RNA sequence: GGGAACGACUCGAGUAGAGUCGAAAAGGAUCCUUCGUAGUCAGGAAGGUAACUGCCUCGUGUACAGUUACCAGUGACUAGAAACCAUGUCAUCGUACACGAGGAUGACAUCGUCUAUUAAGGAUCGCUACUUCUGAGUAUUCGUACUUAGAAGUAGAAAAGAAACAACAACAACAAC
Reactivity to 2A3 in 0.01 (KOAc 150mM, MgCl2 10mM, bicine 150mM(pH8.5), 24C), signal-to-noise 9, nucleotides 027 to 126: g020g000a000u000c000c000u010u020c040g060u010a000g000u010c020a020g070g170a160a070g030g010u010a020a010c010u030g010c000c010u060c060g060u060g020u040a040c010a020g010u020u030a030c000c010a020g030u010g010a000c000u000a030g090a050a010a000c020c010a020u030g000u000c000a010u010c020g060u080a020c090a020c070g060a030g070g000a000u010g000a000c000a020u010c010g020u000c020u030a080u060u080a050a000g000g000a000u000c000g000
Reactivity to DMS in 0.01 (KOAc 150mM, MgCl2 10mM, bicine 150mM(pH8.5), 24C), signal-to-noise 9, nucleotides 027 to 126: g000g000a010u000c000c000u000u000c170g010u000a010g010u000c010a070g010g010a150a130g000g010u000a020a020c020u000g000c080c030u010c170g010u010g010u010a200c010a040g000u000u000a020c040c030a140g010u000g000a020c010u000a100g000a120a010a010c090c090a030u000g000u000c000a010u000c010g010u000a050c140a080c190g000a060g000g000a010u000g000a010c010a020u000c260g000u000c050u000a100u010u000a030a020g010g010a010u000c000g000